[RMDB]
RNA sequence: GGGAACGACUCGAGUAGAGUCGAAAAAAACUUCAAGAACGUUCAUGGCGUUCCGGAUGAGGCUAUUGAGCGGAUGCGUGCACGUUGGGAAGAAAUCUAAAAACUGAGAGGAUGAGAAAUGAAUUCGAGCAACGCGAAGGACUACCUGCCGCUGGUGACCUUAGUAUUUGUUCGCAAAUACUAAGGUAAAAGAAACAACAACAACAAC
Reactivity to 2A3 in 0.01 (KOAc 150mM, MgCl2 10mM, bicine 150mM(pH8.5), 24C), signal-to-noise 3, nucleotides 027 to 156: a000a000a010c070u090u050c070a090a030g030a100a020c010g020u030u050c050a050u110g150g000c030g040u070u030c030c020g070g020a070u110g040a040g050g000c040u080a060u170u130g050a020g010c010g050g020a040u050g010c050g040u040g010c050a000c060g040u080u040g030g000g010a000a020g020a030a050a000u030c030u150a040a070a010a020a030c030u030g010a030g000a000g090g020a030u060g030a020g040a060a080a040u120g040a020a040u140u050c040g000a010g020c050a050a030c020g000c040g030a050a030g020g020a010c010u050a060c020c010u040g050c030c020g000c020u020g030g050u040g040
Reactivity to DMS in 0.01 (KOAc 150mM, MgCl2 10mM, bicine 150mM(pH8.5), 24C), signal-to-noise 3, nucleotides 027 to 156: a060a030a030c020u010u000c020a110a070g010a040a040c040g020u000u000c100a100u010g020g010c000g020u000u000c020c030g010g010a120u000g010a080g000g000c040u000a100u000u000g000a100g020c080g010g000a070u000g010c070g020u000g020c030a070c060g020u000u010g010g020g010a050a030g000a050a050a050u000c040u020a060a040a070a050a060c060u020g000a080g010a130g000g000a060u010g010a110g010a060a050a070u000g000a070a090u010u000c070g020a130g020c030a050a060c070g010c050g000a070a050g000g010a080c040u000a060c020c010u010g000c040c030g020c030u000g010g010u000g000
This 207-nucleotide RNA was probed chemically with 2A3 and DMS. For DMS the reverse transcriptase was MarathonRT.